RNA sequence: GGGAACGACUCGAGUAGAGUCGAAAAAAGAAACAUUGUUUAUGCAAAGGCACGUCGCAAUGUGUGCUCAAACAUUGCUUAUUCAAACACGCUUCACAAUGUGCGACAAAGAAACAUUGUUAUAAGAUCCACUAAGUCGCCUUCGGGCGACUUAGAAGGUACCUUUGAGGUUCGCCUCAAAGGUACCAAAAGAAACAACAACAACAAC
Reactivity to 2A3 in 0.01 (KOAc 150mM, MgCl2 10mM, bicine 150mM(pH8.5), 24C), signal-to-noise 2, nucleotides 027 to 156: a000a030g140a050a060a000c060a030u080u060g020u060u050u030a140u130g020c040a060a060a110g030g010c010a020c040g120u080c080g070c070a090a070u100g030u010g000u020g020c040u060c050a020a080a010c050a030u030u020g010c010u120u040a090u060u050c040a010a040a070c030a000c070g040c000u040u010c000a000c000a020a020u030g000u000g070c030g000a010c080a010a100a090g090a030a040a000c010a000u000u030g020u070u050a170u030a110a040g040a100u070c000c000a020c050u000a000a000g000u000c000g000c010c010u020u030c140g030g000g010c040g030a000c000u000u000a000g000a000a000